[RMDB]
RNA sequence: GGGAACGACUCGAGUAGAGUCGAAAAGUGGGAGCCCGCAAGGGUGCACCAUCGACCGAUCCUGAAGUCUUCGGAUGGAUUUGAGUAAGAGCGUGGCUGUUGGGACCCGAAAGAUGGUGAACUAUGCAGAGAAUUCUUCAUUCGUGAAGAAUUCUCUAAAAGAAACAACAACAACAAC
Reactivity to DMS in 0.01 (KOAc 150mM, MgCl2 10mM, bicine 150mM(pH8.5), 24C), signal-to-noise 2, nucleotides 027 to 126: g000u000g020g000g020a300g000c000c000c000g020c300a080a130g000g000g010u000g000c010a090c010c010a010u000c010g000a230c050c040g020a080u030c010c010u000g000a150a120g010u020c080u000u020c020g020g000a060u020g010g000a000u010u030u010g020a140g010u000a100a070g000a060g000c040g000u010g000g020c010u070g000u000u020g000g000g010a110c040c050c030g010a050a080a150g010a000u000g030g000u000g000a050a060c050u010a130u020g010c200
Reactivity to 2A3 in 0.01 (KOAc 150mM, MgCl2 10mM, bicine 150mM(pH8.5), 24C), signal-to-noise 1, nucleotides 027 to 126: g040u040g010g020g000a040g050c010c020c000g060c060a060a130g140g000g000u030g000c040a000c000c000a000u040c000g030a080c000c050g010a010u010c000c020u050g080a070a040g070u060c060u180u160c090g030g060a140u110g140g090a230u100u100u240g120a110g060u130a080a050g020a030g090c000g020u120g020g010c010u000g080u240u060g020g000g020a040c000c040c000g030a010a080a010g050a000u040g000g000u020g010a030a020c020u020a020u190g010c050
Structure probing data (DMS and 2A3) for a 177-nucleotide construct. It was measured as part of the RMDB library RFM100.